The data come from the RNA Mapping Database (RMDB), library 15KLIB. An RNA of 170 nucleotides, treated with 2A3 and DMS and read out base by base.

RNA sequence: GGGAACGACUCGAGUAGAGUCGAAAAAUAUGUGUCUCAUGGUUUAGACUUAAUGCAAGCAGGGAGUGUCGUGCGUAGAGUUAACGUGCCCUACGUGUGUCUCCUAGCUAAUAAAGAGCAAGAAGCUAUAGUCGGUGCUUCGGCACCGACAAAAGAAACAACAACAACAAC
Reactivity to 2A3 in 0.01 (KOAc 150mM, MgCl2 10mM, bicine 150mM(pH8.5), 24C), signal-to-noise 2, nucleotides 027 to 129: a000u300a000u060g040u050g000u030c000u020c000a010u100g060g030u000u030u130a010g030a060c060u040u010a030a030u060g040c050a070a000g000c020a050g000g080g000a010g000u130g110u190c000g040u040g000c000g000u000a000g010a000g070u050u090a050a050c130g090u210g000c000c000c000u050a030c000g000u020g000u000g000u010c000u000c000c000u040a000g000c030u000a030a070u070a010a250a050g100a000g060c000a050a070g120a040a050g000c010u080a010u060a140
Reactivity to DMS in 0.01 (KOAc 150mM, MgCl2 10mM, bicine 150mM(pH8.5), 24C), signal-to-noise 2, nucleotides 027 to 129: a010u110a080u100g010u010g010u020c010u000c080a150u050g000g000u010u000u070a130g000a270c030u000u000a040a060u000g040c260a070a130g020c050a300g000g050g040a000g020u150g030u150c020g110u040g000c000g080u020a100g020a060g060u000u030a160a090c300g060u050g010c000c000c000u000a020c050g090u010g000u000g030u030c000u060c020c000u010a060g000c050u060a000a090u110a130a080a150g060a120g040c040a000a060g000a130a040g060c050u010a080u050a190